RNA sequence: GGGAACGACUCGAGUAGAGUCGAAAACUUCGUUUCGACGAAGCGCAUUCCUAAGUCCAGGGAGGGAAUUUACAGACAUGAAAUAUCGGAAACGAUAUUUCAACAGCUGUAGGGUUCCCGAGGAUCUGGAUAUGGACAAACCCGAUUUCGAUCGGAAAAGGUAAUUUAAAUUCGUUUAAAUUACCUUAAAAGAAACAACAACAACAAC
Reactivity to DMS in 0.01 (KOAc 150mM, MgCl2 10mM, bicine 150mM(pH8.5), 24C), signal-to-noise 2, nucleotides 027 to 156: c020u000u000c000g040u000u000u000c270g000a070c000g000a030a010g020c010g000c060a180u000u000c010c000u010a120a270g020u010c000c010a030g010g010g020a110g020g010g000a040a010u000u000u000a030c030a030g000a070c030a300u000g000a030a000a030u000a010u000c000g020g010a190a110a280c010g020a040u000a000u000u000u000c000a030a060c060a160g010c000u000g010u000a010g020g030g000u000u020c000c010c020g000a100g020g000a060u000c010u000g000g010a010u000a120u010g020g010a090c160a080a100a130c070c010c000g020a120u000u000u010c130g000a160u000c040g010g000a080a110
Reactivity to 2A3 in 0.01 (KOAc 150mM, MgCl2 10mM, bicine 150mM(pH8.5), 24C), signal-to-noise 3, nucleotides 027 to 156: c000u020u000c010g040u030u050u190c190g110a010c010g010a010a000g000c040g020c090a090u080u060c010c000u030a170a020g010u000c000c000a000g000g000g020a010g010g010g000a000a000u020u000u040a020c010a050g090a060c020a060u030g000a000a000a000u000a000u000c010g030g020a050a060a040c010g000a000u000a000u000u000u020c010a030a000c010a030g030c000u000g000u020a010g080g090g000u020u000c000c000c010g010a030g000g000a000u000c000u000g000g000a000u020a110u090g040g020a020c070a070a130a050c010c030c000g020a010u060u150u090c130g080a030u070c030g130g030a210a150
The record gives the reactivity of an RNA of 207 nucleotides to DMS and 2A3.
The reactions ran in a buffer of 150 mM KOAc, 10 mM MgCl2 and 150 mM bicine (pH 8.5), at 24 C.
For 2A3 the reverse transcriptase was SuperScript II with manganese.
The DMS profile rests on 5,046 reads.